[RMDB]
RNA sequence: GGGAACGACUCGAGUAGAGUCGAAAAGGUCAUCCUUCACAGGAUCGUGUGGAAGUCCUGCUCGGGGCGGAAGCAUUAAAACCAUUCGAGCUAGUCAAUGCGUGGCGUGUCUCUCGGCAGCGUGUUGUGUAUGAGAGUGGAUUCGUCCACUCUCAAACCACAUCUACGUGUUCGCACGUAGAUGUGGAAAAGAAACAACAACAACAAC
Reactivity to 2A3 in 0.01 (KOAc 150mM, MgCl2 10mM, bicine 150mM(pH8.5), 24C), signal-to-noise 1, nucleotides 027 to 156: g050g060u080c010a060u000c040c000u140u210c070a100c000a120g030g000a060u090c070g000u010g000u000g080g000a050a010g010u000c000c040u000g010c100u080c070g000g000g010g000c020g010g010a000a040g030c020a000u200u110a020a080a050a030c040c000a010u080u020c040g040a020g000c010u050a010g100u080c080a090a090u160g000c020g010u080g030g020c000g030u040g070u000c040u020c000u000c070g000g000c040a060g000c080g000u060g010u050u000g000u030g020u050a130u140g000a000g000a000g000u010g040g000a000u030u040c170g130u000c050c000a000c000u000c000u010c000a000a000a000